RNA sequence: GGGAACGACUCGAGUAGAGUCGAAAAAGCAGGGCGCUGAGCUUCUCAGCGGGAUACUGUUGCAAGCGAACGUACACAUAGUCCGCAUCGUAGCGUUCGAAACGCAAGAAAGCGACAGUCCUCGAAAGCCAAACGCUCAGUUCGCUGAGCGUUUGGCAAAAGAAACAACAACAACAAC
Reactivity to 2A3 in 0.01 (KOAc 150mM, MgCl2 10mM, bicine 150mM(pH8.5), 24C), signal-to-noise 1, nucleotides 027 to 126: a020g150c140a020g010g000g020c100g020c000u000g080a000g010c000u300u230c030u060c120a000g020c000g000g040g000a030u070a270c000u000g000u020u010g000c070a300a110g140c020g000a000a070c030g030u080a020c120a000c000a110u300a070g010u000c050c050g130c110a060u000c030g000u060a000g080c000g000u000u000c110g040a110a250a020c050g030c010a050a050g000a140a140a000g000c050g020a000c000a000g000u000c000c000u000c000g020a070a010a000
The record gives the reactivity of an RNA of 177 nucleotides to 2A3.
Reactivities are given for positions 27 through 126.
Source: RMDB library OK1LIB, as collected in RNAgym.
Values are in units of 0.01, from 0 to 300, in steps of 10.